[RMDB]
RNA sequence: GGGAACGACUCGAGUAGAGUCGAAAACAAGAGACACUGUGGAUCUGAUCUGGGGCCAACUACCUCUAUCAGGUGAGUUAGUUAAAAAACGUCUAGUGGGCCAAACCCAGGGGGGAUCCCUGGUUUCGAUAAGCCAUAGGUUCGCCUAUGGCUUAUCAAAAGAAACAACAACAACAAC
Reactivity to 2A3 in 0.01 (KOAc 150mM, MgCl2 10mM, bicine 150mM(pH8.5), 24C), signal-to-noise 1, nucleotides 027 to 126: c030a050a030g030a010g050a090c030a040c300u120g060u300g050g020a030u020c000u020g020a020u000c010u000g000g000g070g000c010c000a010a000c000u000a020c000c040u020c000u090a160u250c100a070g150g140u060g030a000g000u030u020a010g010u010u020a060a160a000a010a010a000c050g070u030c120u200a060g010u040g030g000g000c000c080a100a000a010c010c000c000a000g000g000g020g010g030g000a010u020c000c010c000u020g020g000u000u060u060c000
Reactivity to DMS in 0.01 (KOAc 150mM, MgCl2 10mM, bicine 150mM(pH8.5), 24C), signal-to-noise 2, nucleotides 027 to 126: c060a140a190g000a020g000a060c030a080c040u000g000u000g000g000a020u000c000u000g000a300u020c040u000g000g010g000g020c030c030a020a020c010u000a040c060c000u000c030u000a120u020c170a030g000g000u010g010a020g000u020u000a040g000u000u000a010a020a070a090a120a070c200g010u010c120u020a100g020u000g000g000g010c050c160a040a100a120c080c010c000a040g020g000g000g000g010g000a050u000c010c000c020u010g010g010u000u000u000c030
This 177-nucleotide RNA was probed chemically with 2A3 and DMS. 2A3 adducts were read by reverse transcription with SuperScript II with manganese. The reactions ran in a buffer of 150 mM KOAc, 10 mM MgCl2 and 150 mM bicine (pH 8.5), at 24 C. The 2A3 profile rests on 942 reads. It was measured as part of the RMDB library RFMREP.